[RMDB]
RNA sequence: GGGAACGACUCGAGUAGAGUCGAAAAUUCGGGAUGAAGCCAGGCGAGCUGGUGAUCGGCAAGAUCUACGCCGCGCUCCGAAGGCUCGGGGUGGACUACGUGUUCGACACCAACUUCAGCGCCGAUCUCCUGUGAGACAUUUCGAUGUCUCACAGGAAAAAGAAACAACAACAACAAC
Reactivity to 2A3 in 0.01 (KOAc 150mM, MgCl2 10mM, bicine 150mM(pH8.5), 24C), signal-to-noise 2, nucleotides 027 to 126: u030u020c030g010g050g060a060u150g140a100a060g040c060c050a040g060g000c050g010a020g000c020u030g030g050u060g030a140u030c000g020g000c000a020a000g050a230u000c010u000a010c120g070c070c000g000c010g010c000u060c100c120g180a130a050g020g000c010u000c000g010g010g010g010u000g000g020a010c040u100a060c120g140u010g040u120u260c000g010a010c000a020c020c000a010a010c000u080u060c050a060g020c010g000c030c000g020a030u010c010
Reactivity to DMS in 0.01 (KOAc 150mM, MgCl2 10mM, bicine 150mM(pH8.5), 24C), signal-to-noise 3, nucleotides 027 to 126: u020u010c030g030g010g020a100u000g000a080a130g000c060c060a130g010g010c080g000a030g030c040u000g000g020u000g000a130u000c010g020g000c040a100a080g030a260u000c030u000a020c010g000c000c010g000c200g010c010u000c080c300g020a170a260g010g010c020u000c030g000g000g010g020u000g000g000a020c050u000a120c210g010u010g010u000u010c030g000a040c010a020c010c020a020a030c020u000u000c110a100g010c070g010c000c000g000a070u010c060
About this RNA: An RNA of 177 nucleotides, treated with 2A3 and DMS and read out base by base. Values are in units of 0.01, from 0 to 300, in steps of 10. Conditions: 150 mM KOAc, 10 mM MgCl2 and 150 mM bicine (pH 8.5), 24 C. Source: RMDB library OK2TST, as collected in RNAgym.